Structure probing data (DMS and 2A3) for a 177-nucleotide construct. It was measured as part of the RMDB library TTRDEL. The RNA was probed in 150 mM KOAc, 10 mM MgCl2 and 150 mM bicine (pH 8.5) at 24 C. For DMS the reverse transcriptase was MarathonRT. Reactivities are given for positions 27 through 126. For DMS, 1,790 sequencing reads were counted.
[RMDB]
RNA sequence: GGGAACGACUCGAGUAGAGUCGAAAAGAUAUGGAUUAGUGGAGAACGUAUCGGAAACGAUACCAGUUCGUUGAAACUACGGUCCUAAGUCAAAAUCCAUCACGCUAGUUCGCUAGCGUGAUGGAAACCCUUAAACCGUGUUCGCACGGUUUAAGGGAAAAGAAACAACAACAACAAC
Reactivity to DMS in 0.01 (KOAc 150mM, MgCl2 10mM, bicine 150mM(pH8.5), 24C), signal-to-noise 2, nucleotides 027 to 126: g010a010u000a020u010g000g000a010u010u000a120g000u000g020g000a050g010a020a020c030g020u000a000u000c000g000g000a000a000a010c010g000a020u000a000c300c250a160g010u000u000c000g000u000u000g000a090a160a030c010u000a080c300g010g010u000c000c010u010a030a100g000u010c020a080a070a090a100u000c000c000a000u000c000a000c000g000c010u000a000g030u000u020c250g010c010u000a000g000c020g010u000g000a030u010g010g000a000a020a040
Reactivity to 2A3 in 0.01 (KOAc 150mM, MgCl2 10mM, bicine 150mM(pH8.5), 24C), signal-to-noise 2, nucleotides 027 to 126: g000a000u020a000u040g000g020a000u050u140a100g010u010g030g000a050g000a020a000c020g000u010a000u000c000g030g000a000a000a000c010g000a000u000a010c050c090a040g020u000u010c050g150u160u030g010a010a010a000c020u070a050c180g040g010u010c000c000u000a020a000g010u000c010a020a000a040a250u000c000c010a010u000c000a000c010g020c000u020a020g030u060u030c230g030c230u010a000g000c000g010u010g000a010u010g010g000a000a000a000